[RMDB]
RNA sequence: GGGAACGACUCGAGUAGAGUCGAAAAGUUGUAGACACUGAGUGGGGUAACAUGUUAACGGGCAUUGCUGCACGUCCUCCACCAGGUGAACAGUUUAAGCACCUCGUGCCUCUUAUGCAUAAGGGGGAAACCAGUAUGUUCGCAUACUGGAAAAGAAACAACAACAACAAC
Reactivity to 2A3 in 0.01 (KOAc 150mM, MgCl2 10mM, bicine 150mM(pH8.5), 24C), signal-to-noise 9, nucleotides 027 to 129: g020u020u020g040u040a030g010a070c010a020c070u010g030a060g100u020g000g020g000g020u070a150a040c050a150u150g040u200u180a090a030c030g000g030g000c040a040u040u300g080c110u080g010c040a000c030g040u040c000c000u020c010c000a000c000c020a010g000g050u020g010a050a010c030a030g000u030u040u070a060a020g030c040a040c030c000u030c030g040u030g070c010c020u090c040u110u120a100u250g070c050a070u080a090a080g000g000g000g000g010a030a020a030
Reactivity to DMS in 0.01 (KOAc 150mM, MgCl2 10mM, bicine 150mM(pH8.5), 24C), signal-to-noise 9, nucleotides 027 to 129: g020u000u010g030u010a050g030a170c080a040c030u020g000a280g000u000g000g030g060g000u020a070a120c210a110u030g020u050u010a130a080c060g000g000g040c040a060u030u020g020c110u000g060c040a050c080g000u040c140c020u010c010c000a050c000c040a030g010g010u040g000a050a020c100a110g010u020u010u010a050a080g040c130a180c010c010u000c110g010u010g000c000c060u000c100u050u020a060u040g030c120a080u010a040a050g010g000g000g000g030a060a080a120